The record gives the reactivity of an RNA of 207 nucleotides to DMS and 2A3. For DMS the reverse transcriptase was MarathonRT. The RNA was probed in 150 mM KOAc, 10 mM MgCl2 and 150 mM bicine (pH 8.5) at 24 C. For DMS, 2,619 sequencing reads were counted. The data come from the RNA Mapping Database (RMDB), library OK3TST.
[RMDB]
RNA sequence: GGGAACGACUCGAGUAGAGUCGAAAAUACUGUGGGAUGACUAUAGUUAACAAUAGCGUAUUAUAUAGUUUCAGAUAGCUGGAAAGAAAACAUUGAAUAUUUCUAACACAAAUAAAUGAUACAUGUUUGAGAUGAUGAAUGUGUAAAUAUGCUGAUACAGUUUUAGUCGAUUCGUCGACUAAAACUGAAAAGAAACAACAACAACAAC
Reactivity to DMS in 0.01 (KOAc 150mM, MgCl2 10mM, bicine 150mM(pH8.5), 24C), signal-to-noise 2, nucleotides 027 to 156: u000a020c050u000g050u000g030g010g010a190u010g000a120c060u010a040u000a150g010u000u000a080a070c030a080a070u000a080g010c010g010u000a000u000u000a110u000a100u020a110g010u000u000u010c070a090g000a180u000a050g030c030u000g030g000a080a100a070g010a170a070a110a050c040a060u000u000g010a110a180u020a110u000u000u000c010u000a030a050c070a100c040a040a040a140u010a020a070a100u000g030a150u010a080c080a080u010g020u010u000u010g000a060g000a160u010g030a100u010g010a040a030u000g000u010g010u000a010a060a100u010a060u000g010c050u010g000a140u000a160
Reactivity to 2A3 in 0.01 (KOAc 150mM, MgCl2 10mM, bicine 150mM(pH8.5), 24C), signal-to-noise 4, nucleotides 027 to 156: u100a010c020u020g010u050g020g030g010a080u090g030a030c010u010a020u030a130g070u090u140a150a040c070a110a170u080a130g000c000g020u060a020u080u040a030u010a020u030a050g020u000u010u100c010a030g050a100u080a080g120c060u030g030g060a030a080a020g070a000a120a020a000c030a040u020u140g050a140a060u070a070u080u070u000c020u050a050a000c020a010c020a060a160a040u180a030a060a030u120g010a010u030a050c040a030u060g060u030u050u060g040a030g000a030u100g020a020u070g020a030a030u030g040u000g010u030a010a050a020u090a030u090g030c020u020g060a050u110a170